Chemical mapping of a 177-nucleotide RNA with DMS and 2A3. Values are in units of 0.01, from 0 to 300, in steps of 10.
RNA sequence: GGGAACGACUCGAGUAGAGUCGAAAACGACAAGGCGGUCUGGAUCGCGAACGAACUGCGGUGGUACGUGCCGAUCAUGCUCGCGCUGUCCGCGAACUCGCCGUACUGGAACGGGUUCGACACCGGGUGUCUACCCACUUUUCGAAGUGGGUAGACAAAAAGAAACAACAACAACAAC
Reactivity to DMS in 0.01 (KOAc 150mM, MgCl2 10mM, bicine 150mM(pH8.5), 24C), signal-to-noise 3, nucleotides 027 to 126: c110g010a090c090a060a100g000g030c040g010g010u000c100u010g010g010a030u000c090g030c130g010a060a060c040g000a080a010c080u000g010c030g000g010u000g030g020u000a040c110g010u000g010c050c020g010a050u010c060a120u010g010c020u020c020g000c030g010c120u000g020u000c030c040g000c030g010a020a020c030u010c020g000c020c000g010u010a070c130u000g010g010a110a080c020g000g010g000u000u000c010g010a100c160a190c020c020g000g000g030
Reactivity to 2A3 in 0.01 (KOAc 150mM, MgCl2 10mM, bicine 150mM(pH8.5), 24C), signal-to-noise 2, nucleotides 027 to 126: c030g030a010c010a030a070g090g000c000g030g000u020c040u150g160g040a040u030c010g000c010g070a050a010c010g000a030a020c010u110g080c120g180g030u100g020g030u080a060c020g040u100g050c040c030g010a000u070c040a070u160g010c030u000c040g000c000g000c030u030g060u020c020c010g020c010g000a010a010c000u000c040g000c010c000g030u060a120c070u120g040g010a200a120c020g000g000g080u000u010c020g040a020c020a050c080c020g080g030g070